[RMDB]
RNA sequence: GGGAACGACUCGAGUAGAGUCGAAAAUGUGGAAGUCCUGCUCGGGGCGGAAGCAUUAAAACCAUUCGAGCUAGUCAAUGCGUGGCGUGUCUCUCCGCAGCGUGUUGGCGAAUGUAAAGAGUGAUUAUUGACCACGCAACGUUCGCGUUGCGUGGAAGACAUAUACCCAGUUCGCUGGGUAUAUGUCAAAAGAAACAACAACAACAAC
Reactivity to DMS in 0.01 (KOAc 150mM, MgCl2 10mM, bicine 150mM(pH8.5), 24C), signal-to-noise 3, nucleotides 027 to 156: u000g040u010g010g000a300a300g020u000c020c030u000g000c150u000c180g030g010g010g010c010g030g030a300a300g020c020a040u000u020a040a060a060a070c030c010a140u000u010c020g000a250g010c040u000a140g010u010c040a060a030u010g020c000g000u000g030g060c010g050u010g010u000c130u000c060u010c250c010g030c010a050g030c010g020u000g000u020u000g000g010c010g000a060a050u000g010u000a030a090a180g000a040g050u010g000a110u000u000a100u010u000g000a220c000c010a010c000g000c000a010a020c010g060u000u010c300g030c070g060u010u000g010c010g000u000g000g010a010a030
Reactivity to 2A3 in 0.01 (KOAc 150mM, MgCl2 10mM, bicine 150mM(pH8.5), 24C), signal-to-noise 6, nucleotides 027 to 156: u050g010u040g030g020a040a050g010u010c010c010u050g060c060u040c070g010g010g000g000c020g000g010a000a010g000c000a000u060u170a020a020a000a060c060c030a040u110u160c050g020a020g010c010u030a010g010u000c000a000a010u010g010c010g020u020g140g000c010g000u050g030u000c020u000c010u000c040c000g000c010a040g000c010g010u020g000u010u000g000g000c000g000a010a020u060g040u120a010a050a020g010a010g020u030g040a040u020u210a100u170u270g090a070c000c000a000c000g000c010a000a010c010g010u050u070c200g010c000g080u000u000g000c000g010u000g000g000a000a000
Chemical mapping of a 207-nucleotide RNA with DMS and 2A3. For DMS, 4,771 sequencing reads were counted. For DMS the reverse transcriptase was MarathonRT. 2A3 is a SHAPE reagent: it acylates the 2'-hydroxyl of flexible nucleotides of all four kinds. 2A3 adducts were read by reverse transcription with SuperScript II with manganese.